[RMDB]
RNA sequence: GGGAACGACUCGAGUAGAGUCGAAAAAGAGGUGAUACGUCGCCUCAAGCUUGGUGCUUAGCUUCUUUCACCAAGCAUAUUACACGCGGAUAACCGCCAAAGGAGAAACACUGACUACGGUCAGUGAGGAAGUUGGUUCGGUUCGCCGAACCAACAAUCACGAAUUAAGGUUCGCCUUAAUUCGUGAAAAAGAAACAACAACAACAAC
Reactivity to DMS in 0.01 (KOAc 150mM, MgCl2 10mM, bicine 150mM(pH8.5), 24C), signal-to-noise 1, nucleotides 027 to 156: a100g010a040g030g050u020g010a090u000a040c180g030u000c010g040c000c020u000c000a040a110g000c000u000u000g000g040u000g030c010u000u000a040g010c090u000u000c000u000u000u000c030a060c000c030a030a040g010c040a100u010a040u010u000a110c100a140c070g000c000g000g040a160u000a070a170c010c000g010c000c070a000a040a160g000g010a030g000a180a130a130c020a000c000u020g010a020c000u000a090c300g070g030u010c020a000g030u000g000a020g010g000a090a130g000u050u000g010g010u000u000c000g010g000u000u020c260g020c030c000g020a000a010c000c000a000a000c000a090a080
Reactivity to 2A3 in 0.01 (KOAc 150mM, MgCl2 10mM, bicine 150mM(pH8.5), 24C), signal-to-noise 4, nucleotides 027 to 156: a000g010a000g000g000u020g010a010u030a070c220g080u030c010g020c010c000u000c040a010a010g000c000u000u000g000g000u000g020c040u050u050a060g030c010u030u030c000u010u020u000c000a000c010c000a000a000g000c000a000u070a020u050u140a050c100a020c080g000c000g020g000a070u080a300a300c000c000g000c020c010a040a050a020g000g010a030g010a020a120a000c000a000c000u020g010a000c000u020a010c130g080g000u000c020a000g010u020g000a010g040g070a080a190g010u000u000g000g010u000u000c000g010g010u010u030c110g030c100c000g000a000a000c000c000a000a000c000a010a000
Chemical mapping of a 207-nucleotide RNA with DMS and 2A3. Source: RMDB library M2RFPK, as collected in RNAgym. For DMS, 2,870 sequencing reads were counted. The RNA was probed in 150 mM KOAc, 10 mM MgCl2 and 150 mM bicine (pH 8.5) at 24 C.